An RNA of 177 nucleotides, treated with DMS and 2A3 and read out base by base. Reactivities are given for positions 27 through 126. The reactions ran in a buffer of 150 mM KOAc, 10 mM MgCl2 and 150 mM bicine (pH 8.5), at 24 C. As a SHAPE reagent, 2A3 marks flexible, mostly unpaired nucleotides at the ribose 2'-OH.
RNA sequence: GGGAACGACUCGAGUAGAGUCGAAAACUCGGCUUUAGAGCGCGCGGACCCGGCCGAUCCCGCGAGGCGAGGUCGGAUGGUGGUGGUGGCCGUGAUGGUGCGGCGUGCGGGUCAUUGCGGGGGCGGUUUAACGCCCAGAGUUCGCUCUGGGCGUUAAAAAAGAAACAACAACAACAAC
Reactivity to DMS in 0.01 (KOAc 150mM, MgCl2 10mM, bicine 150mM(pH8.5), 24C), signal-to-noise 3, nucleotides 027 to 126: c070u000c010g020g010c050u010u020u020a080g000a110g000c050g000c080g000c050g010g000a110c050c010c020g010g010c000c010g000a050u010c000c020c020g010c100g010a140g040g010c040g010a100g020g000u000c040g030g010a070u020g000g000u010g010g020u020g000g010u000g000g030c000c010g010u000g000a130u020g000g010u020g000c000g000g010c030g030u040g000c050g000g000g000u000c060a090u020u010g000c040g020g000g010g000g000c040g010g000u010
Reactivity to 2A3 in 0.01 (KOAc 150mM, MgCl2 10mM, bicine 150mM(pH8.5), 24C), signal-to-noise 3, nucleotides 027 to 126: c040u000c010g000g030c030u140u120u160a120g020a020g060c030g010c000g000c000g050g040a070c030c000c000g010g040c020c020g010a050u040c010c000c000g020c030g090a060g060g060c020g020a040g010g020u040c030g000g030a140u100g040g050u070g010g030u060g020g040u070g040g000c000c000g000u010g010a190u210g020g030u090g020c030g000g000c020g020u020g020c000g020g010g010u050c030a070u010u140g000c020g000g000g000g020g000c030g030g000u030

The DMS profile rests on 7,738 reads.